[RMDB]
RNA sequence: GGGAACGACUCGAGUAGAGUCGAAAACAUAAGGAAAGGAAUAGGGCUCUUAUUCAUCAGAGCUGGCAGUUGAGUGUGUGUUUAAUCAACGCAUGACGAAUGAGCAAGAAACUAAGUCUGGGCUCAUCCAGAGAACUUGUCUUCUAGUAAUCAGUAACAGCGUAUUCGUAUUCGUACGAAUACGCUGAAAAGAAACAACAACAACAAC
Reactivity to 2A3 in 0.01 (KOAc 150mM, MgCl2 10mM, bicine 150mM(pH8.5), 24C), signal-to-noise 3, nucleotides 027 to 156: c050a050u130a020a070g020g020a080a020a000g070g030a050a080u080a070g020g030g050c000u000c020u020u120a090u220u170c060a070u070c040a020g010a000g020c010u010g040g000c020a030g000u070u110g070a090g030u050g000u010g000u010g040u010u080u080a060a060u160c060a010a000c030g000c070a030u050g050a030c030g000a050a050u070g010a010g000c010a020a020g050a110a080a020c080u110a140a020g060u000c000u010g000g040g030c070u050c100a060u020c020c000a020g010a000g010a060a010c010u010u030g010u070c000u090u010c000u010a040g020u070a070a050u120c040a040g050u040a060a060
Reactivity to DMS in 0.01 (KOAc 150mM, MgCl2 10mM, bicine 150mM(pH8.5), 24C), signal-to-noise 1, nucleotides 027 to 156: c030a090u000a140a070g020g000a100a060a110g010g010a060a100u000a080g010g000g190c020u020c010u000u000a090u000u000c140a200u000c070a030g000a030g030c020u000g030g000c040a100g030u000u010g000a110g010u000g050u000g010u000g000u000u000u000a090a140u000c090a070a040c070g020c040a120u000g010a140c030g000a070a090u000g010a010g020c010a030a050g000a090a060a160c080u010a060a100g010u000c000u010g000g020g040c130u000c110a060u040c020c000a080g020a100g030a110a160c020u000u000g000u000c000u000u000c140u010a140g010u000a060a070u010c060a040g030u000a060a180